[RMDB]
Annotation: This 207-nucleotide RNA was probed chemically with 2A3. The data come from the RNA Mapping Database (RMDB), library OK3TST. Values cover nucleotides 27 to 156. Conditions: 150 mM KOAc, 10 mM MgCl2 and 150 mM bicine (pH 8.5), 24 C.
RNA sequence: GGGAACGACUCGAGUAGAGUCGAAAACUCGAGGCUAUCACAAGUGGUGAAGUCGAAGACUCGUUAACACUCGACUUCCAACAAACAGUCGCCGAGAUCCAGAACGUCAAGCUCCAAGAAACAGUCACGAACGGCCUCAACAACGCAGACACACUGCCCUGUUAGUGCCUUUCGAGGCACUAACAGGAAAAGAAACAACAACAACAAC
Reactivity to 2A3 in 0.01 (KOAc 150mM, MgCl2 10mM, bicine 150mM(pH8.5), 24C), signal-to-noise 2, nucleotides 027 to 156: c010u020c030g020a030g000g070c000u040a040u170c050a010c030a280a130g000u050g030g050u300g090a010a010g010u000c010g020a050a010g050a060c030u080c180g200u130u150a110a030c000a020c070u010c000g000a000c010u000u070c020c000a030a020c030a010a110a000c070a040g030u040c030g000c110c010g010a010g000a020u000c010c000a010g040a060a030c020g060u040c060a020a060g000c000u000c060c010a040a010g050a060a090a000c100a020g020u060c030a040c070g050a090a010c050g070g040c020c000u090c010a070a090c010a050a000c080g000c020a010g030a050c010a010c020a010c110u030g000c000